[RMDB]
Chemical mapping of a 207-nucleotide RNA with 2A3. The data come from the RNA Mapping Database (RMDB), library M2RFPK. 2A3 adducts were read by reverse transcription with SuperScript II with manganese.
RNA sequence: GGGAACGACUCGAGUAGAGUCGAAAAUCAUCAAGAAGUAGGCUUAGGCCAAUUGCUUGGUGGUGAAAGUAGAGGGAAGGGAGCACUUCGACGCCUCUAAGUACGCUGUGGGAGUAGUGCUUAAAUCAAAAGCACAGCGACUUCGGUCGCUGUGCAACAUUCCUGGGUACUUCGGUACCCAGGAAUGAAAAGAAACAACAACAACAAC
Reactivity to 2A3 in 0.01 (KOAc 150mM, MgCl2 10mM, bicine 150mM(pH8.5), 24C), signal-to-noise 2, nucleotides 027 to 156: u020c000a000u000c010a000a000g020a070a020g040u080a040g040g010c030u100u120a070g260g000c000c020a060a110u060u020g020c000u000u000g010g010u000g000g030u020g020a050a010a000g070u100a030g010a060g050g050g030a030a080g040g000g010a060g020c030a020c100u050u040c050g040a060c020g090c030c000u070c040u080a040a060g030u030a020c090g010c120u040g010u080g060g020g010a050g020u050a010g020u040g000c000u030u050a070a080a040u120c110a070a050a020a020g000c000a000c000a000g020c000g010a000c000u030u060c170g060g000u000c000g000c000u000g010u000g020c000a000a000